Background:
Chemical mapping of a 170-nucleotide RNA with 2A3 and DMS. The reactions ran in a buffer of 150 mM KOAc, 10 mM MgCl2 and 150 mM bicine (pH 8.5), at 24 C. 2A3 adducts were read by reverse transcription with SuperScript II with manganese. The 2A3 profile rests on 1,022 reads. It was measured as part of the RMDB library 15KLIB.

[RMDB]
RNA sequence: GGGAACGACUCGAGUAGAGUCGAAAAACUACUUGUUUGAGACUAUUCCCACACAGUUGUUCCCACUCUUAUUUGUGACUAUGGCCUUCGUUAUGUUGUUGGUUAAACACAAACACACCUUUUUGACACACCGGGAGCUUCGGCUCCCGGAAAAGAAACAACAACAACAAC
Reactivity to 2A3 in 0.01 (KOAc 150mM, MgCl2 10mM, bicine 150mM(pH8.5), 24C), signal-to-noise 2, nucleotides 027 to 129: a000c050u230a050c070u220u300g000u030u010u000g010a030g000a000c040u070a020u030u030c070c000c010a000c000a000c030a000g010u010u010g080u000u000c040c000c000a000c000u040c050u000u300a210u060u030u030g000u050g000a000c150u180a010u040g000g000c050c070u000u000c030g090u180u100a210u230g010u060u010g000u000u020g030g040u020u110a140a110a000c090a000c010a070a060a000c000a000c000a060c000c010u000u050u040u040u080g130a060c030a000c040a000
Reactivity to DMS in 0.01 (KOAc 150mM, MgCl2 10mM, bicine 150mM(pH8.5), 24C), signal-to-noise 2, nucleotides 027 to 129: a000c060u000a080c070u000u070g070u000u000u000g000a300g000a040c120u000a220u000u000c050c050c050a070c160a100c080a050g000u010u010g000u000u000c020c040c000a120c150u100c020u000u050a000u000u100u010g000u050g120a190c000u020a260u000g020g000c000c000u050u030c090g300u030u000a090u040g000u030u030g050u030u030g000g270u060u000a060a030a040c000a100c090a000a040a210c170a000c110a070c080c000u060u000u000u000u000g000a090c000a080c130a120